[RMDB]
RNA sequence: GGGAACGACUCGAGUAGAGUCGAAAAGAGUACAUAUGCCCAGCCUUACUGGCGCGGCUGGAUGCUUCGUGCAAAUGCUAUGUACGCCUACGUAUAUGUGCGUAGAUGCCUAUAUUUUCUCUCCUGAGAAAAUAUAGAUGCAUACAAAGCGUAUGCAAUUUAUACUCCGUUUCGACGGAGUAUAAAUAAAAGAAACAACAACAACAAC
Reactivity to DMS in 0.01 (KOAc 150mM, MgCl2 10mM, bicine 150mM(pH8.5), 24C), signal-to-noise 6, nucleotides 027 to 156: g010a130g030u000a100c070a100u000a060u000g020c020c010c000a110g000c020c040u000u000a150c080u000g010g010c060g040c190g010g020c020u000g000g010a240u000g010c020u000u000c090g010u000g020c020a060a120a090u000g000c010u000a120u000g010u000a010c010g010c030c010u000a020c010g020u000a120u000a110u010g020u000g010c040g020u000a040g010a140u000g000c060c000u000a020u000a010u000u000u000u000c000u000c000u000c250c250u010g010a030g000a020a010a020a020u000a010u000a010g010a060u000g030c010a060u000a030c020a040a110a120g010c040g030u000a100u000g010c020a150
Reactivity to 2A3 in 0.01 (KOAc 150mM, MgCl2 10mM, bicine 150mM(pH8.5), 24C), signal-to-noise 9, nucleotides 027 to 156: g070a010g010u020a010c010a010u040a030u280g010c000c000c010a010g000c010c010u170u210a170c130u230g170g020c120g010c060g070g000c010u000g000g030a060u100g020c030u090u190c250g100u170g040c010a030a060a150u190g000c010u020a010u040g010u000a000c000g020c000c000u020a030c020g030u020a040u020a040u180g140u060g050c010g010u020a020g020a090u080g020c000c000u000a000u000a000u000u010u010u000c010u000c020u060c050c190u170g000a000g000a000a000a000a000u000a000u000a000g020a020u100g000c000a000u030a060c010a020a170a020g030c010g010u000a010u020g000c000a000
This 207-nucleotide RNA was probed chemically with DMS and 2A3. Reactivities are given for positions 27 through 156. The RNA was probed in 150 mM KOAc, 10 mM MgCl2 and 150 mM bicine (pH 8.5) at 24 C. DMS adducts were read by reverse transcription with MarathonRT. The 2A3 profile rests on 13,202 reads.